RNA sequence: GGGAACGACUCGAGUAGAGUCGAAAAGAUAUGGAUUGCGUAAUAAAAUGGGAGAGCGAUAAGAUCCGUGUCGGAAACGACAUCGAUCUUUUGACGCUUUAACAUUUUAUUACGCAAUCCUAAGUCACAUAUCAAUCCGCUUCGGCGGAUUGAUAUGAAAAGAAACAACAACAACAAC
Reactivity to DMS in 0.01 (KOAc 150mM, MgCl2 10mM, bicine 150mM(pH8.5), 24C), signal-to-noise 2, nucleotides 027 to 126: g010a040u000a300u000g000g000a030u020u000g000c010g030u000a010a010u000a000a000a020a020u000g000g000g010a120g000a000g000c010g040a150u010a010a020g000a000u000c010c160g000u000g000u000c000g020g010a090a130a280c000g050a010c000a010u010c300g010a000u000c000u020u000u000u000g030a240c110g040c000u010u010u010a130a070c000a020u000u000u000u010a020u010u000a000c000g030c000a000a000u000c000c040u000a000a090g000u010c060a190